This 207-nucleotide RNA was probed chemically with 2A3. Conditions: 150 mM KOAc, 10 mM MgCl2 and 150 mM bicine (pH 8.5), 24 C.
RNA sequence: GGGAACGACUCGAGUAGAGUCGAAAAGUGAUCACGCAAUCCGAGACCCCGCGUGAUCACGAGUUUAGGGGUCAGGACAUGUUAUGCUGGCUAUACGUACGCACCAAAGGGCUGCGGGUGCGUACGAAUCUUACGCAGCCCACUGUUGCCAGCUAGACAUAUCAGGAGGGUUCGCCCUCCUGAUAUGAAAAGAAACAACAACAACAAC
Reactivity to 2A3 in 0.01 (KOAc 150mM, MgCl2 10mM, bicine 150mM(pH8.5), 24C), signal-to-noise 1, nucleotides 027 to 156: g000u000g000a000u000c000a000c000g000c120a090a050u150c180c030g120a090g080a170c000c000c050c000g000c010g000u000g000a000u000c000a010c000g050a060g000u230u210u080a050g000g010g000g000u010c060a050g000g010a030c010a010u120g090u150u170a030u130g060c020u000g090g000c010u020a030u010a220c000g010u000a000c000g050c000a000c010c000a030a000a210g040g000g000c000u000g000c020g000g000g000u000g000c000g010u000a000c000g000a000a020u070c030u070u130a040c090g000c000a000g000c000c000c000a010c050u030g060u050u040g050c030c010a000g130c050u010a000g000a000